[RMDB]
RNA sequence: GGGAACGACUCGAGUAGAGUCGAAAAAGCUCCUGUUUCGACAGGAGCUGUGUGGCUGCCCUUUUGUGCUCGAUCUAGAGUGCUUUCCUGCCGGAAAGGGCUUGAGAGCUUGAUUCGUCAAGCUCAAAGUACGCUAUAUUUUCGAAUAUAGCGUACUAAAAGAAACAACAACAACAAC
Reactivity to DMS in 0.01 (KOAc 150mM, MgCl2 10mM, bicine 150mM(pH8.5), 24C), signal-to-noise 9, nucleotides 027 to 126: a010g010c000u000c000c000u000g000u000u000u010c160g010a030c000a010g000g000a010g020c000u000g000u000g020u010g010g010c040u000g000c010c000c010u000u000u000u000g030u000g010c010u000c010g000a160u010c240u010a110g000a020g010u000g010c070u000u000u000c010c000u000g010c050c030g010g000a020a020a030g010g010g010c010u010u000g000a200g010a010g010c000u000u000g000a020u000u010c170g010u000c000a000a010g000c000u000c000a020a050
Reactivity to 2A3 in 0.01 (KOAc 150mM, MgCl2 10mM, bicine 150mM(pH8.5), 24C), signal-to-noise 6, nucleotides 027 to 126: a000g010c010u010c000c000u010g020u010u080u080c200g090a010c000a000g000g000a000g000c000u000g000u010g000u030g030g010c070u060g000c020c010c010u010u020u010u040g100u040g010c000u010c020g170a300u120c060u120a070g000a010g020u020g010c010u040u050u010c010c020u040g060c020c020g010g020a030a010a010g010g010g000c000u040u090g120a080g000a000g010c000u000u010g010a020u040u080c160g030u010c130a000a000g000c000u000c000a000a000